Structure probing data (2A3 and DMS) for a 177-nucleotide construct. The DMS profile rests on 1,225 reads. Source: RMDB library OK2TST, as collected in RNAgym. For DMS the reverse transcriptase was MarathonRT.
RNA sequence: GGGAACGACUCGAGUAGAGUCGAAAAUGUUCUUCCUCCAGAGCGCUUACCAGUACAGAGAGAAGAGGAAUGACUGCAUGAAUCUACCUGAGUUGCUGGCAUUGGGAGGCCAGUUACUGGAAAGGAAUAUAUGUCCAGUCUUCGGACUGGACAUAUAAAAAGAAACAACAACAACAAC
Reactivity to 2A3 in 0.01 (KOAc 150mM, MgCl2 10mM, bicine 150mM(pH8.5), 24C), signal-to-noise 1, nucleotides 027 to 126: u060g000u010u000c000u070u020c000c010u000c010c020a010g010a030g100c060g010c030u040u020a090c020c040a030g020u070a020c060a010g020a000g030a000g050a170a010g000a010g020g080a070a010u120g050a100c070u140g000c070a060u100g070a030a080u000c010u050a100c000c010u070g080a090g100u050u020g100c030u010g000g030c020a070u070u170g090g060g080a050g080g000c000c030a020g010u010u040a030c020u020g070g090a140a010a000g030g050a040a030
Reactivity to DMS in 0.01 (KOAc 150mM, MgCl2 10mM, bicine 150mM(pH8.5), 24C), signal-to-noise 2, nucleotides 027 to 126: u010g000u000u010c070u020u000c070c000u010c040c090a110g010a200g010c080g000c010u000u000a130c050c050a040g060u010a080c090a060g000a110g020a160g020a140a100g000a040g000g000a090a030u000g010a100c110u020g000c150a090u000g000a110a070u010c030u000a090c020c010u000g020a050g010u010u010g010c000u000g010g000c060a030u000u030g000g010g010a070g000g000c000c010a030g000u010u000a020c040u000g000g000a050a090a070g000g010a060a140